This 177-nucleotide RNA was probed chemically with 2A3 and DMS. The DMS profile rests on 1,726 reads. DMS adducts were read by reverse transcription with MarathonRT. Values cover nucleotides 27 to 126.

RNA sequence: GGGAACGACUCGAGUAGAGUCGAAAAGCGGCCGACCGAACGUCUCGCGGUCCCGGCACCACUGCGCGGUGAGGUCCAGGCACCGCUGGGCGCUCGAAUACGCCUGGGCGGCAAGGCCGAUGCGCUCCCUACUACAGCCGUUCGCGGCUGUAGUAGGAAAAGAAACAACAACAACAAC
Reactivity to 2A3 in 0.01 (KOAc 150mM, MgCl2 10mM, bicine 150mM(pH8.5), 24C), signal-to-noise 2, nucleotides 027 to 126: g070c010g010g000c020c000g060a040c030c010g010a030a010c010g000u020c040u070c060g000c000g010g010u020c020c000c000g020g020c020a030c020c010a030c050u190g080c230g080c140g130g030u050g030a050g060g020u010c000c040a030g010g000c130a010c020c000g000c000u010g000g000g020c020g000c010u030c030g060a100a050u220a080c070g000c000c020u120g100g140g030c030g020g000c040a060a090g030g000c000c000g000a040u070g030c060g030c040u040c010
Reactivity to DMS in 0.01 (KOAc 150mM, MgCl2 10mM, bicine 150mM(pH8.5), 24C), signal-to-noise 2, nucleotides 027 to 126: g040c030g000g000c000c020g020a120c140c010g000a040a030c020g020u000c030u000c300g000c010g020g000u010c070c000c080g020g000c040a130c030c030a040c100u000g000c160g000c130g000g000u000g010a090g000g030u000c010c040a040g010g030c170a000c000c010g000c000u000g000g000g010c010g000c000u000c030g000a120a140u000a090c110g000c030c000u010g000g000g000c070g000g010c020a130a140g010g010c000c020g010a030u010g010c120g000c060u010c020